[RMDB]
RNA sequence: GGGAACGACUCGAGUAGAGUCGAAAACAGCUUCCGGCAAAAUAUCAUCAGCGCGCCACCUGCAUGUUUGACCGUCACGGUUUGUUAGCAUUGCUUGCCGGGCGCUUUCUGGCGUUUGUCCGCACUCGACGUAUGGAGCCUUCGGGCUCCAUACGUCAAAAGAAACAACAACAACAAC
Reactivity to 2A3 in 0.01 (KOAc 150mM, MgCl2 10mM, bicine 150mM(pH8.5), 24C), signal-to-noise 1, nucleotides 027 to 126: c000a000g030c080u040u050c030c000g010g000c040a060a060a080a010u180a170u090c040a000u040c020a030g010c000g000c010g000c000c000a000c000c000u100g080c020a030u070g180u000u050u190g020a030c010c030g110u280c060a040c120g000g000u030u050u060g110u060u100a040g000c060a040u000u230g020c000u030u000g020c000c000g020g040g000c010g010c000u020u010u030c010u040g010g010c000g010u000u010u110g030u050c030c020g020c000a060c010u110c010